[RMDB]
RNA sequence: GGGAACGACUCGAGUAGAGUCGAAAAGCGUCUGGCCAGACUGCGCAGCGACGAUCUCGCCGCCCGGCUCUUGGCUAUCGGCCACAAGACCGCGAGCAGGAUGAGCCCGGAAGCAAAGCGCCUCGACCACAUGUCACGUGUUCGCACGUGACAUGUGAAAAGAAACAACAACAACAAC
Reactivity to DMS in 0.01 (KOAc 150mM, MgCl2 10mM, bicine 150mM(pH8.5), 24C), signal-to-noise 2, nucleotides 027 to 126: g010c030g000u000c070u010g000g010c010c020a030g000a180c050u000g000c080g010c170a110g000c020g000a080c090g010a120u030c140u000c020g020c020c020g000c080c010c000g000g000c040u000c000u000u050g000g040c030u010a180u000c130g000g010c010c090a080c300a130a030g000a190c030c020g010c100g000a050g000c070a100g030g000a120u000g000a050g010c060c010c010g020g000a110a070g020c050a040a050a130g000c090g020c000c020u020c000g010a130c150
Reactivity to 2A3 in 0.01 (KOAc 150mM, MgCl2 10mM, bicine 150mM(pH8.5), 24C), signal-to-noise 6, nucleotides 027 to 126: g040c020g010u020c030u020g020g000c010c010a020g000a090c030u040g000c050g020c070a040g020c010g020a040c060g030a090u070c030u040c050g010c000c000g010c010c020c000g030g000c060u000c010u050u070g020g010c010u040a160u190c100g070g010c010c010a100c060a060a050g040a040c010c010g010c070g020a020g000c010a030g030g050a080u060g020a020g000c020c080c000g020g050a050a020g020c060a100a060a010g050c050g020c020c020u060c020g040a060c060